[RMDB]
RNA sequence: GGGAACGACUCGAGUAGAGUCGAAAAGAGCGUCGAGAGACGAAGAGAAGUGCAUGGAUCCACAACGGAGAACGUAAUAAUGCACACAUGUGGCUUAGUGUCCGGAACAACGGGCACAAGAGGCAGAGAUGAGCGUCCAUUUCGAUGGACGCUCAUCAAAAGAAACAACAACAACAAC
Reactivity to 2A3 in 0.01 (KOAc 150mM, MgCl2 10mM, bicine 150mM(pH8.5), 24C), signal-to-noise 1, nucleotides 027 to 126: g000a010g000c070g000u000c000g000a030g020a000g010a000c070g000a120a120g020a000g010a210a130g000u000g010c000a010u020g000g020a100u020c000c020a040c060a170a000c300g000g060a040g100a160a000c030g110u100a080a040u090a160a070u000g030c100a000c000a000c000a040u230g130u050g110g010c000u080u000a070g000u000g000u000c000c000g000g130a140a080c070a040a100c000g000g000g000c000a000c000a000a040g050a000g000g000c000a000g010a000
Reactivity to DMS in 0.01 (KOAc 150mM, MgCl2 10mM, bicine 150mM(pH8.5), 24C), signal-to-noise 1, nucleotides 027 to 126: g000a080g100c090g000u000c000g010a250g000a110g060a040c000g050a060a020g000a210g010a060a060g010u000g000c000a000u000g000g000a170u010c040c000a190c060a030a090c040g000g000a110g020a050a280c150g040u010a150a220u000a160a030u000g000c000a020c000a060c120a100u020g010u060g010g000c000u000u000a060g020u000g000u000c000c000g000g010a020a130c240a060a090c000g060g010g000c000a000c000a050a000g030a030g000g060c000a000g000a250